[RMDB]
RNA sequence: GGGAACGACUCGAGUAGAGUCGAAAACGCCGUCCGUGGCCGCACCGACGACGAUGGCCGCCCGGCAGCGCUGGUGGCCAGCCUUGCACCCGCACGCAAGCGUGCCAGCGAGCUCAGCGCCGACGAGAAAAGGCACGUAGUUCGCUACGUGCCUUUUAAAAGAAACAACAACAACAAC
Reactivity to DMS in 0.01 (KOAc 150mM, MgCl2 10mM, bicine 150mM(pH8.5), 24C), signal-to-noise 1, nucleotides 027 to 126: c080g000c030c000g000u000c050c150g010u000g020g020c040c140g070c080a140c100c160g000a080c020g020a050c020g060a190u000g020g000c070c100g000c030c000c110g000g010c060a090g000c030g020c000u000g000g000u000g030g030c000c070a090g010c060c020u010u000g050c010a100c110c100c220g040c070a090c130g030c020a060a100g010c060g000u000g040c020c020a040g020c060g010a100g000c090u000c080a060g020c040g020c010c040g000a160c110g000a160g020